[RMDB]
RNA sequence: GGGAACGACUCGAGUAGAGUCGAAAAUGUGGUCAGCGGCGCAGGCCAGAUUGGCUCGUCUAUUUCAAUUGAUGGCAAAGCCGGAAAAGGCGAUAUCACCAAGGGGUCCAUCAUCGCCUUCGCUGAUGUCUUUGAGGUGCAUCCCAUCACCGGCGCGCUACCCUCUGAAUUUCGAUUCAGAGGGUAGAAAAGAAACAACAACAACAAC
Reactivity to 2A3 in 0.01 (KOAc 150mM, MgCl2 10mM, bicine 150mM(pH8.5), 24C), signal-to-noise 2, nucleotides 027 to 156: u150g050u040g050g000u030c000a020g030c040g010g090c060g000c060a070g080g010c030c020a050g070a200u080u090g020g000c030u030c030g030u040c020u050a170u020u250u010c090a160a060u110u160g050a050u070g060g000c050a070a140a050g000c000c000g060g010a070a090a000a000g040g000c090g000a000u040a050u160c100a060c040c030a050a040g010g030g020g000u000c050c000a010u050c020a020u090c020g000c000c060u130u100c050g000c010u020g010a040u020g020u010c020u060u090u110g070a070g040g000u020g030c020a080u000c030c000c000a010u050c030a010c020c020g000g030c010g000c000g000
Reactivity to DMS in 0.01 (KOAc 150mM, MgCl2 10mM, bicine 150mM(pH8.5), 24C), signal-to-noise 1, nucleotides 027 to 156: u000g060u000g030g060u000c030a050g040c060g010g010c040g040c120a080g010g030c000c060a110g000a110u000u000g020g010c020u000c040g000u000c030u000a140u000u000u000c060a110a170u000u010g000a110u000g020g000c040a040a050a150g020c020c050g020g000a060a020a110a070g010g060c020g010a060u000a030u050c050a080c010c010a080a200g000g000g020g000u030c020c050a030u000c050a050u020c020g010c020c020u010u000c050g010c120u010g020a050u000g000u000c000u010u000u000g000a200g060g040u000g010c120a040u010c000c000c020a100u000c060a180c020c010g020g050c000g080c150g010